Chemical mapping of a 207-nucleotide RNA with 2A3. It was measured as part of the RMDB library RNAMAK.
RNA sequence: GGGAACGACUCGAGUAGAGUCGAAAAGAUAUGGAGAUCUUCUCUAGCGUGGAGCUUUGAUCUAUGGUUAUCAUGGUCGGAAACGACCAUCUUAUGCCAUAGGGAGCUCUCGGGAGAUCUCCUAAGUCAAACGAUCAAUAGUUCGCUAUUGAUCGAACCAGACUGCUCCCUUCGGGGAGCAGUCUGGAAAAGAAACAACAACAACAAC
Reactivity to 2A3 in 0.01 (KOAc 150mM, MgCl2 10mM, bicine 150mM(pH8.5), 24C), signal-to-noise 1, nucleotides 027 to 156: g000a000u090a050u140g000g010a020g020a010u040c000u130u010c070u110c110u170a110g090c110g230u250g080g000a020g010c020u300u190u090g050a030u010c000u000a000u000g030g010u060u100a010u100c050a010u010g010g000u010c000g000g010a050a010a030c020g000a000c000c000a000u000c020u030u050a050u200g000c000c000a000u000a000g010g010g010a000g000c000u010c010u000c010g000g000g000a000g000a000u000c000u000c000c000u000a030a000g020u000c010a030a020a120c000g000a000u010c000a000a000u010a000g040u060u070c300g040c150u000a000u000u010g020a000u010c000g000a030a000